Notes: The record gives the reactivity of an RNA of 177 nucleotides to DMS and 2A3. The reactions ran in a buffer of 150 mM KOAc, 10 mM MgCl2 and 150 mM bicine (pH 8.5), at 24 C. The data come from the RNA Mapping Database (RMDB), library OK2TST. The DMS profile rests on 1,240 reads. For DMS the reverse transcriptase was MarathonRT.
RNA sequence: GGGAACGACUCGAGUAGAGUCGAAAAGAUACUUUCCGUGCAGCGGCAGUAGAGCAGCUACAAGUCUGGGGUGAUCGCAACAAGAUUGCUGUCGUCGCACAGCAUACUGGUGCAGACUCAGCGUCAGGACGUGUGGGGAAUUCGUUCCCCACACGUCAAAAGAAACAACAACAACAAC
Reactivity to DMS in 0.01 (KOAc 150mM, MgCl2 10mM, bicine 150mM(pH8.5), 24C), signal-to-noise 2, nucleotides 027 to 126: g000a160u000a070c190u000u000u000c000c030g060u000g000c010a070g000c020g010g040c010a070g010u000a080g000a170g000c070a030g000c030u020a050c090a050a080g000u010c090u000g000g010g030g000u010g000a100u000c100g000c000a020a020c080a120a040g000a230u010u000g010c000u000g010u000c040g000u010c140g000c120a030c000a000g030c070a030u000a200c040u000g010g000u000g010c010a120g010a040c030u000c050a040g010c050g000u030c060a100g010
Reactivity to 2A3 in 0.01 (KOAc 150mM, MgCl2 10mM, bicine 150mM(pH8.5), 24C), signal-to-noise 2, nucleotides 027 to 126: g030a010u120a140c040u040u090u070c030c000g000u030g050c020a020g010c030g060g000c000a010g000u090a010g030a030g000c040a010g050c030u040a040c060a150a010g110u040c010u020g100g000g000g020u040g020a100u090c070g020c050a030a060c020a070a000g020a130u090u090g020c000u000g020u030c100g090u030c030g040c010a000c010a000g000c010a040u150a180c020u080g040g000u010g000c030a040g010a090c010u010c030a000g040c020g060u030c020a000g030